[RMDB]
RNA sequence: GGGAACGACUCGAGUAGAGUCGAAAAGUCCAGGGCUGAGAAGAACCGCCUCUGGGGCCCUUUGGAGGUCAGGCGCGUGGGCCGCAGCUCCAAGCAGCUGGUCGACAUCCCUGAGGGCCAGCUGGAGCCUAGCGGUCCACUUCGGUGGACCGCUAGGAAAAGAAACAACAACAACAAC
Reactivity to DMS in 0.01 (KOAc 150mM, MgCl2 10mM, bicine 150mM(pH8.5), 24C), signal-to-noise 1, nucleotides 027 to 126: g020u040c040c080a060g040g010g000c030u020g030a190g010a170a190g010a170a070c090c110g000c020c020u000c060u010g010g000g000g010c010c030c030u010u000u010g000g020a070g020g000u000c030a180g020g020c000g020c300g070u000g000g030g040c120c000g020c060a070g010c020u000c030c030a070a040g050c050a040g000c010u000g040g020u010c000g000a250c110a090u020c040c010c020u000g010a250g000g010g000c000c010a000g000c020u000g000g000a080g020
This 177-nucleotide RNA was probed chemically with DMS. Source: RMDB library OK2TRN, as collected in RNAgym. Reactivities are given for positions 27 through 126. Conditions: 150 mM KOAc, 10 mM MgCl2 and 150 mM bicine (pH 8.5), 24 C.